[RMDB]
RNA sequence: GGGAACGACUCGAGUAGAGUCGAAAAUGUCAGACUGGAGGCCCAGCGCCUGGCAAGUGGAGGUGUACAAAUGGAGGCCUGAGCUGCCAAAACUUUAUUUGCAUAAAUGGCGACAUGAAUCAGUUAUCAUUCUGAUUAAAUCCAUUUUCUGCUUAACCACCUUAUUUGGGUUCGCCCAAAUAAGGUGAAAAGAAACAACAACAACAAC
Reactivity to DMS in 0.01 (KOAc 150mM, MgCl2 10mM, bicine 150mM(pH8.5), 24C), signal-to-noise 2, nucleotides 027 to 156: u010g020u010c040a050g000a080c030u000g010g020a090g010g040c060c020c060a100g040c050g040c030c000u010g030g020c030a040a180g040u000g020g040a140g030g020u000g030u030a120c030a060a110a120u000g000g040a080g000g030c050c030u020g010a140g010c010u010g000c030c000a070a060a090a070c060u010u010u000a060u030u010u000g000c010a070u000a010a020a060u000g010g010c080g000a100c150a120u020g020a030a060u000c020a020g000u010u000a110u010c170a180u000u010c000u000g000a050u000u000a030a050a220u010c020c000a060u000u000u030u000c090u000g000c040u000u010a030a240c120
Reactivity to 2A3 in 0.01 (KOAc 150mM, MgCl2 10mM, bicine 150mM(pH8.5), 24C), signal-to-noise 5, nucleotides 027 to 156: u090g020u020c000a010g040a180c040u060g040g060a030g070g040c030c020c020a030g010c040g020c020c000u040g020g080c080a120a080g040u110g070g060a040g030g020u050g010u080a080c070a040a170a030u080g060g010a040g010g010c000c000u020g030a010g010c030u030g020c020c010a060a110a000a010c020u110u180u170a110u080u180u110g000c000a010u020a070a070a030u040g010g000c030g040a040c040a110u150g040a030a000u000c000a000g020u030u120a190u250c070a080u240u000c000u000g000a000u010u040a070a090a040u060c000c010a010u070u010u020u070c070u030g030c040u100u120a060a080c070

Conditions: 150 mM KOAc, 10 mM MgCl2 and 150 mM bicine (pH 8.5), 24 C. An RNA of 207 nucleotides, treated with DMS and 2A3 and read out base by base. Reactivities are given for positions 27 through 156. The data come from the RNA Mapping Database (RMDB), library OK3TST. The 2A3 profile rests on 3,133 reads.